[RMDB]
RNA sequence: GGGAACGACUCGAGUAGAGUCGAAAAGAUAUGGAACCCAAAGGCCGAUAAGUUCGGUUCGGAAACGAACCAGAACUUUUGACGGCUGAUGGGUUCCUAAGUCAAAACCGUCUCUUCGGAGACGGAACAAGAUAAUGAUCUUCGGAUCAUUAUCUUGAAAAGAAACAACAACAACAAC
Reactivity to DMS in 0.01 (KOAc 150mM, MgCl2 10mM, bicine 150mM(pH8.5), 24C), signal-to-noise 7, nucleotides 027 to 126: g000a030u010a300u010g000g000a010a010c010c000c000a010a060a300g000g010c000c000g030a210u010a010a020g000u000u000c010g000g000u000u000c000g010g000a100a090a110c000g010a010a010c000c010a140g020a010a010c000u000u010u010u000g000a140c170g010g000c000u000g000a300u000g010g000g010u000u000c000c000u000a000a060g000u000c030a100a060a100a170c010c000g010u000c000u000c000u000u010c200g030g000a030g000a000c000g000g000a040a090
Reactivity to 2A3 in 0.01 (KOAc 150mM, MgCl2 10mM, bicine 150mM(pH8.5), 24C), signal-to-noise 5, nucleotides 027 to 126: g000a000u030a030u100g000g000a000a010c010c010c020a000a010a010g050g000c030c150g300a130u150a300a010g000u010u010c010g000g010u010u010c000g010g000a050a030a020c010g000a000a020c030c100a140g010a000a000c000u040u010u070u080g110a070c100g010g000c000u010g000a000u010g000g000g000u000u000c000c000u000a000a000g000u010c010a010a020a080a170c000c010g000u000c000u010c000u010u090c290g210g000a000g000a000c000g000g000a000a030